[RMDB]
RNA sequence: GGGAACGACUCGAGUAGAGUCGAAAAAAGCUUAUUUCGAAUUUGGCACGGGUGAAUCGGCAAUUUCAUUAUUACCGUCUGGAUAUAAAAAUCUAAGCAUUACACGUACAUUUUCCAAAACAUUUGGUUUAGCAGGUCUACGUAUCGGUUACCUAACUGAAGGUGAGAGAUUCGUCUCUCACCUUCAAAAAGAAACAACAACAACAAC
Reactivity to DMS in 0.01 (KOAc 150mM, MgCl2 10mM, bicine 150mM(pH8.5), 24C), signal-to-noise 1, nucleotides 027 to 156: a100a050g020c070u010u000a100u000u000u000c020g010a050a070u010u000u000g010g030c030a070c070g040g020g000u020g000a060a130u010c060g020g000c010a000a010u020u000u000c280a100u010u040a070u000u000a030c000c000g000u000c060u000g000g010a020u000a100u010a010a080a060a060a020u000c060u010a000a020g010c040a070u010u000a120c060a100c080g030u000a130c070a150u000u000u000u020c040c030a070a060a110a040c020a130u000u000u000g060g020u000u000u000a040g010c100a050g010g000u010c030u000a100c100g020u010a060u000c010g000g000u000u010a050c040c000u030a060a080c180
Reactivity to 2A3 in 0.01 (KOAc 150mM, MgCl2 10mM, bicine 150mM(pH8.5), 24C), signal-to-noise 1, nucleotides 027 to 156: a000a000g070c150u140u100a110u010u130u190c030g030a060a070u060u060u020g030g000c040a020c040g020g000g000u040g020a100a040u090c050g010g040c030a000a030u000u100u060c110a070u040u180a020u090u080a010c010c010g030u010c010u040g020g000a000u050a000u010a170a070a080a020a010u010c030u050a000a000g020c030a010u020u090a050c060a000c070g010u150a010c010a110u020u150u090u020c070c020a000a000a080a000c030a130u060u020u150g020g000u000u030u010a060g000c020a000g020g000u010c080u070a010c090g070u030a070u080c020g080g030u050u130a020c120c000u300a090a140c050
Annotation: This 207-nucleotide RNA was probed chemically with DMS and 2A3. The 2A3 profile rests on 578 reads. DMS adducts were read by reverse transcription with MarathonRT.